An RNA of 177 nucleotides, treated with DMS and 2A3 and read out base by base. Conditions: 150 mM KOAc, 10 mM MgCl2 and 150 mM bicine (pH 8.5), 24 C. 2A3 is a SHAPE reagent: it acylates the 2'-hydroxyl of flexible nucleotides of all four kinds. The data come from the RNA Mapping Database (RMDB), libraries RFM100 and RFMREP. 2A3 adducts were read by reverse transcription with SuperScript II with manganese.
RNA sequence: GGGAACGACUCGAGUAGAGUCGAAAAGCUCGUCAUGAAGAUAAACAAAAUUAUCGAAUAUAUUGUAGUAGCAAUCAUCGUUCUAGUGUGGACUUACUUCAUUGUCAUUAAAGAAAUUCUUCCUAAAAUUAUAGUCUGAAUUCGUUCAGACUAUAAUAAAAGAAACAACAACAACAAC
Reactivity to DMS in 0.01 (KOAc 150mM, MgCl2 10mM, bicine 150mM(pH8.5), 24C), signal-to-noise 7, nucleotides 027 to 126: g020c020u000c090g030u010c060a040u000g010a130a100g000a040u010a050a090a100c060a070a080a140a110u010u010a020u000c020g000a100a120u020a110u020a050u010u010g010u000a090g010u010a100g020c020a050a060u010c100a060u010c040g000u000u010c030u000a050g000u010g010u000g000g000a090c190u010u010a040c040u000u000c030a030u000u010g000u000c040a080u010u030a060a070a090g000a060a050a080u020u020c080u000u000c020c020u010a050a060a070
Reactivity to 2A3 in 0.01 (KOAc 150mM, MgCl2 10mM, bicine 150mM(pH8.5), 24C), signal-to-noise 9, nucleotides 027 to 126: g050c010u020c040g060u050c030a030u060g040a030a040g030a050u070a060a060a030c060a040a110a070a080u140u070a050u160c010g010a060a010u140a020u020a030u110u070g040u060a200g040u070a020g040c020a010a050u050c030a020u040c090g050u080u010c040u070a080g040u030g050u060g100g030a020c020u040u040a030c000u030u060c010a050u040u110g020u020c010a040u060u190a100a110a030g080a030a110a040u100u030c020u030u020c010c010u070a140a130a020